This 177-nucleotide RNA was probed chemically with 2A3 and DMS. Conditions: 150 mM KOAc, 10 mM MgCl2 and 150 mM bicine (pH 8.5), 24 C. For DMS, 12,093 sequencing reads were counted. Values cover nucleotides 27 to 126. 2A3 is a SHAPE reagent: it acylates the 2'-hydroxyl of flexible nucleotides of all four kinds.
RNA sequence: GGGAACGACUCGAGUAGAGUCGAAAAGAUAUGGAUACUCCCAGACUGCUUUGAUCUCGGAAACGAGGGAGCAGUUUGGGAGGUAUCCUAAGUCAAACGGAUAUACUCCUUCGGGAGUAUAUCCGAAUCAAUACAUACUCUUCGGAGUAUGUAUUGAAAAAGAAACAACAACAACAAC
Reactivity to 2A3 in 0.01 (KOAc 150mM, MgCl2 10mM, bicine 150mM(pH8.5), 24C), signal-to-noise 3, nucleotides 027 to 126: g010a020u070a020u140g000g000a000u000a000c000u000c010c000c000a000g000a010c010u000g070c020u290u250u130g100a150u140c000u010c000g040g020a110a090a070c000g000a020g010g020g000a010g000c000a000g000u000u010u010g010g000g010a010g000g010u000a000u000c000c000u000a050a000g040u020c030a090a010a080c020g000g000a010u000a000u000a010c000u000c020c000u060u160c300g100g000g000a000g000u010a000u000a000u000c000c000g000a000a000
Reactivity to DMS in 0.01 (KOAc 150mM, MgCl2 10mM, bicine 150mM(pH8.5), 24C), signal-to-noise 6, nucleotides 027 to 126: g010a050u000a300u000g000g000a010u000a030c000u000c000c000c000a010g010a000c000u000g000c000u000u000u010g000a070u020c000u000c000g000g000a140a090a190c010g010a010g000g000g000a000g020c000a010g000u000u000u000g000g010g000a000g000g010u000a000u000c000c000u010a030a090g000u010c030a100a100a270c020g000g010a010u000a000u000a000c000u000c000c000u000u010c220g020g000g000a020g010u000a000u000a000u000c000c000g000a010a030